Chemical mapping of a 177-nucleotide RNA with 2A3 and DMS.
RNA sequence: GGGAACGACUCGAGUAGAGUCGAAAAGAUGAGACUCUACCUGUACACGAAUAGGUGGGUUAGUUCGAGUACUGACCCUUGUAUACGUGAAUACAAUGUGAAGUUCUCGAACUUCGCAUGUCUCAGAGAUAGGUUACAUGUUCGCAUGUGAUCUAUCAAAAGAAACAACAACAACAAC
Reactivity to 2A3 in 0.01 (KOAc 150mM, MgCl2 10mM, bicine 150mM(pH8.5), 24C), signal-to-noise 9, nucleotides 027 to 126: g140a060u070g000a000g000a010c010u010c010u050a040c000c010u010g020u050a030c080a010c040g060a090a040u040a040g060g020u010g010g020g010u040u050a010g000u010u070c090g050a030g050u070a020c000u010g040a050c000c000c000u000u020g060u000a020u000a020c070g030u050g090a100a000u020a010c020a020a020u020g010u010g020a010a000g000u010u010c020u010c050g010a010a000c010u020u020c020g010c040a030u080g010u000c000u000c010a030g010a000
Reactivity to DMS in 0.01 (KOAc 150mM, MgCl2 10mM, bicine 150mM(pH8.5), 24C), signal-to-noise 9, nucleotides 027 to 126: g010a130u010g010a050g000a010c000u010c030u010a030c020c020u010g010u010a080c170a100c230g020a110a030u010a020g010g000u000g000g000g010u010u010a000g010u000u010c100g000a070g000u010a010c000u000g000a300c300c020c030u000u000g000u000a000u000a080c220g020u020g010a120a040u010a010c020a020a020u010g000u000g010a140a020g000u000u000c020u010c090g000a010a010c000u000u000c120g010c180a060u020g000u000c000u000c010a030g000a170

DMS (dimethyl sulfate) methylates the pairing face of unpaired adenines and cytosines. The 2A3 profile rests on 129,615 reads. The DMS profile rests on 81,106 reads.